[RMDB]
RNA sequence: GGGAACGACUCGAGUAGAGUCGAAAAUUUUGGGAUGCGGAUGAGUUAAUAGAACAGUCAGUAAGGUUCUACGGGUACGUUGGAGACGUGGCGUAUUUAGAUGAUGCUGAGAGCUAUGCUGUGUGGCUGUAAAGAGAUGAUUCGUCAUCUCUUUACAAAAAGAAACAACAACAACAAC
Reactivity to DMS in 0.01 (KOAc 150mM, MgCl2 10mM, bicine 150mM(pH8.5), 24C), signal-to-noise 9, nucleotides 027 to 126: u000u000u010u000g010g010g010a080u000g010c090g010g010a060u000g010a100g010u000u010a080a120u000a060g010a050a050c050a100g010u010c090a080g010u010a090a100g010g010u000u000c030u000a060c170g010g000g010u000a020c080g010u000u000g010g010a120g010a080c100g020u000g000g010c050g010u000a040u000u000u000a080g000a080u000g010a090u000g010c040u000g000a090g000a070g010c050u000a070u000g010c050u000g010u000g010u000g010g010c110
Reactivity to 2A3 in 0.01 (KOAc 150mM, MgCl2 10mM, bicine 150mM(pH8.5), 24C), signal-to-noise 8, nucleotides 027 to 126: u050u050u030u070g030g000g000a020u050g040c030g040g010a030u030g010a050g060u070u110a110a050u070a140g060a060a020c020a020g110u080c030a020g030u120a120a050g080g020u030u010c010u030a040c040g040g000g020u040a020c020g030u040u060g090g030a090g010a020c030g030u040g010g010c010g000u030a080u020u090u020a060g020a070u130g010a030u070g020c040u030g030a020g010a000g090c010u050a030u130g000c030u010g020u020g020u040g120g000c050
Structure probing data (DMS and 2A3) for a 177-nucleotide construct. Conditions: 150 mM KOAc, 10 mM MgCl2 and 150 mM bicine (pH 8.5), 24 C. DMS adducts were read by reverse transcription with MarathonRT.